[RMDB]
Chemical mapping of a 207-nucleotide RNA with 2A3.

RNA sequence: GGGAACGACUCGAGUAGAGUCGAAAACAAAACUAGUGAGCUUCGUACUAUGUGUCUUCAGGUUGCAAUUGCUGCCUUGUACUACAACCCUGAUUUGCUGCUACAUACUUUAGAACGAAUUCAGUUGCCUCACAACCCUGGACCUAUCACUGUACAGGAGGUCUCUCUGAUUCGUCAGAGAGACCUCAAAAGAAACAACAACAACAAC
Reactivity to 2A3 in 0.01 (KOAc 150mM, MgCl2 10mM, bicine 150mM(pH8.5), 24C), signal-to-noise 2, nucleotides 027 to 156: c050a010a050a000a040c060u110a000g050u000g050a000g020c050u070u090c040g070u020a040c030u060a030u140g160u070g010u040c080u040u030c050a050g080g010u000u040g010c070a140a160u110u200g000c010u020g040c020c000u030u090g040u070a100c000u030a020c040a010a020c030c000c030u030g040a130u040u000u060g030c030u020g010c000u010a040c010a050u040a030c030u140u190u060a050g000a100a040c020g000a080a130u060u030c040a050g050u030u030g040c050c050u080c000a070c000a060a080c030c010c000u000g000g010a030c000c000u070a110u200c020a000c070u090g070u250a030c040a110g140
Conditions: 150 mM KOAc, 10 mM MgCl2 and 150 mM bicine (pH 8.5), 24 C. Values cover nucleotides 27 to 156. 2A3 adducts were read by reverse transcription with SuperScript II with manganese.